[RMDB]
RNA sequence: GGGAACGACUCGAGUAGAGUCGAAAACAUAUGCCGGCUCUAAUGCAAUAAAUGGUCAGAGUAUCCUCGUAAUCACGAUUGUCAGUAUUGCAAUACUCCUGUGGACUCUCAUUCGUCAUUAUCGUUAUAUAUUUAUUAACUGGAUACAGUGAGCGCCACUGCGAGUCAGCUUCGGCUGACUCGCAGUAAAAGAAACAACAACAACAAC
Reactivity to 2A3 in 0.01 (KOAc 150mM, MgCl2 10mM, bicine 150mM(pH8.5), 24C), signal-to-noise 1, nucleotides 027 to 156: c010a020u280a040u130g070c040c000g060g000c000u000c000u060a110a060u080g040c060a150a000u120a260a070a140u080g030g020u120c060a000g040a000g050u010a060u050c000c020u000c000g070u000a100a020u080c030a000c110g050a030u000u030g040u080c000a000g070u070a070u170u120g000c000a010a080u050a300c050u040c070c050u050g000u010g160g130a140c000u000c000u000c020a140u050u040c000g050u020c020a010u040u020a110u180c040g000u110u000a090u000a000u010a110u160u160u050a190u150u170a120a020c050u050g000g000a010u010a150c000a010g060u050g110a060g110c030g030c010c110
Conditions: 150 mM KOAc, 10 mM MgCl2 and 150 mM bicine (pH 8.5), 24 C. The record gives the reactivity of an RNA of 207 nucleotides to 2A3. For 2A3 the reverse transcriptase was SuperScript II with manganese. It was measured as part of the RMDB library OK3TST.